The record gives the reactivity of an RNA of 177 nucleotides to DMS and 2A3.
High 2A3 reactivity points to a flexible backbone, as in loops and unpaired stretches.
The reactions ran in a buffer of 150 mM KOAc, 10 mM MgCl2 and 150 mM bicine (pH 8.5), at 24 C.
For 2A3 the reverse transcriptase was SuperScript II with manganese.

RNA sequence: GGGAACGACUCGAGUAGAGUCGAAAAGUCUUGUCGAAGGCGAUGGUUCGCACGCUGCCGAUGGUUUCGAGCGCGGCGCCGCCCUUGAUGAGCAGGCCCCGGCGCGUGCCCGCGCUGAUGCCGGAGGCUGUGCGAGCCAUUUCGAUGGCUCGCACAGAAAAGAAACAACAACAACAAC
Reactivity to DMS in 0.01 (KOAc 150mM, MgCl2 10mM, bicine 150mM(pH8.5), 24C), signal-to-noise 7, nucleotides 027 to 126: g010u010c020u000u000g020u000c060g000a060a080g000g020c090g000a060u010g000g010u000u000c030g010c020a050c060g020c190u010g010c030c010g010a300u010g010g010u000u000u000c020g010a040g020c010g010c010g000g000c030g000c020c010g000c020c000c060u000u010g000a160u010g000a110g010c060a090g000g000c040c020c030c090g020g010c040g010c120g010u000g000c130c010c000g010c010g000c000u000g000a030u000g010c000c010g000g000a300g010g010
Reactivity to 2A3 in 0.01 (KOAc 150mM, MgCl2 10mM, bicine 150mM(pH8.5), 24C), signal-to-noise 3, nucleotides 027 to 126: g010u000c010u070u090g060u080c070g070a070a040g050g030c040g070a080u090g120g020u100u090c040g030c040a090c050g270c300u120g000c010c010g040a040u060g080g070u060u040u070c130g140a040g000c010g000c010g010g010c020g020c020c010g000c030c000c000u040u100g090a180u050g040a040g110c040a030g080g000c000c030c030c070g020g000c010g010c040g000u040g010c010c010c000g000c000g000c010u030g000a030u070g010c010c020g010g010a020g000g000